Source: RMDB library OK2TRN, as collected in RNAgym.
This 177-nucleotide RNA was probed chemically with DMS.
DMS adducts were read by reverse transcription with MarathonRT.
For DMS, 711 sequencing reads were counted.
The reactions ran in a buffer of 150 mM KOAc, 10 mM MgCl2 and 150 mM bicine (pH 8.5), at 24 C.
Reactivities are given for positions 27 through 126.

RNA sequence: GGGAACGACUCGAGUAGAGUCGAAAAGUGGAAGCUGCGGGCAAGGCCGCACCAUCAGGCACGUGUACUGCAAGACCAGCGACGGACGGGUAGUACCUGAGUCCCAGUGCCAGAUGGAGACCAAGCCCCACGGGCCAAACUUCGGUUUGGCCCGUGGAAAAGAAACAACAACAACAAC
Reactivity to DMS in 0.01 (KOAc 150mM, MgCl2 10mM, bicine 150mM(pH8.5), 24C), signal-to-noise 1, nucleotides 027 to 126: g030u010g010g010a150a170g040c170u010g010c150g030g000g030c010a100a270g020g030c020c020g000c170a110c000c000a000u000c020a070g000g010c010a010c010g000u000g010u000a000c010u000g020c010a060a070g010a080c060c010a100g000c240g020a120c210g000g010a210c030g000g000g000u010a010g020u010a160c030c020u000g030a270g030u000c000c000c000a120g000u000g000c000c000a020g020a020u000g000g010a050g000a140c000c010a060a300g010c060c030